The record gives the reactivity of an RNA of 177 nucleotides to 2A3 and DMS. For 2A3, 5,266 sequencing reads were counted. For DMS, 21,445 sequencing reads were counted.
RNA sequence: GGGAACGACUCGAGUAGAGUCGAAAAAUUAAGGAGAACUGUAGUUCCGUCAGAAGUGAAUUACAUAUGUACUUAGAUACACUUCUAUGUGGUGUUUUGUGCCCUGGUAACUUAGUUAAGUUGAGACCGUACGUAAAUUAUUCGUAAUUUACGUACGAAAAGAAACAACAACAACAAC
Reactivity to 2A3 in 0.01 (KOAc 150mM, MgCl2 10mM, bicine 150mM(pH8.5), 24C), signal-to-noise 7, nucleotides 027 to 126: a000u120u090a050a030g080g010a060g020a090a040c040u030g000u050a000g010u030u030c030c020g070u110c160a060g040a200a050g070u080g110a070a060u050u060a060c040a040u180a090u230g050u060a060c050u080u080a060g010a080u070a040c010a010c010u020u090c040u060a110u110g140u110g040g020u030g050u010u070u050u110g180u110g000c010c010c000u010g000g040u060a030a030c010u010u060a040g050u050u100a190a010g000u030u040g030a020g040a050c010
Reactivity to DMS in 0.01 (KOAc 150mM, MgCl2 10mM, bicine 150mM(pH8.5), 24C), signal-to-noise 7, nucleotides 027 to 126: a080u030u010a040a040g000g010a140g000a080a160c230u000g010u000a030g000u000u000c000c010g010u030c230a120g020a130a090g010u040g000a050a020u000u000a020c030a050u010a080u010g000u000a080c060u020u010a030g000a130u010a050c020a030c020u000u020c060u010a080u040g020u010g000g020u010g010u000u000u020u000g020u010g010c000c010c020u020g000g020u010a020a040c080u000u010a090g020u030u010a020a090g010u010u000g010a090g000a150c150